Source: RMDB library OK2TST, as collected in RNAgym. The record gives the reactivity of an RNA of 177 nucleotides to 2A3 and DMS. Reactivities are given for positions 27 through 126. Conditions: 150 mM KOAc, 10 mM MgCl2 and 150 mM bicine (pH 8.5), 24 C. For 2A3, 9,037 sequencing reads were counted. For DMS, 20,750 sequencing reads were counted. 2A3 adducts were read by reverse transcription with SuperScript II with manganese.

[RMDB]
RNA sequence: GGGAACGACUCGAGUAGAGUCGAAAAUGGCGAUGAAGUUGAUCUGCAGCACCUGACCGAAUGCGAAAGAGAACCCGAUGAACGAGCCGAAAGUGCCGAUGUACAGCAGCGAGAUCACCCAGGUGUGACUAGUACUAGGAUUCGUCCUAGUACUAGUAAAAGAAACAACAACAACAAC
Reactivity to 2A3 in 0.01 (KOAc 150mM, MgCl2 10mM, bicine 150mM(pH8.5), 24C), signal-to-noise 5, nucleotides 027 to 126: u070g020g000c050g040a040u090g090a120a060g060u110u110g040a090u040c010u070g010c020a010g000c010a020c000c020u040g030a050c000c040g050a060a030u090g030c020g050a090a050a030g080a010g010a040a030c030c020c020g020a020u070g040a050a050c050g010a020g010c010c010g070a100a080a010g070u080g030c010c010g020a040u080g030u090a050c030a030g020c000a000g020c020g030a030g010a070u040c010a030c020c000c010a030g060g020u100g010u030g070
Reactivity to DMS in 0.01 (KOAc 150mM, MgCl2 10mM, bicine 150mM(pH8.5), 24C), signal-to-noise 9, nucleotides 027 to 126: u010g000g020c030g020a070u000g010a080a100g010u010u010g000a090u010c040u010g010c070a130g000c050a080c060c030u000g000a100c080c040g010a090a060u000g010c050g000a070a110a080g010a110g000a080a110c040c020c020g010a090u010g010a060a090c090g000a110g000c020c020g010a050a060a100g010u000g010c040c040g000a070u000g010u010a050c080a060g010c060a040g010c040g010a080g010a090u000c060a060c030c010c040a110g000g010u000g010u010g010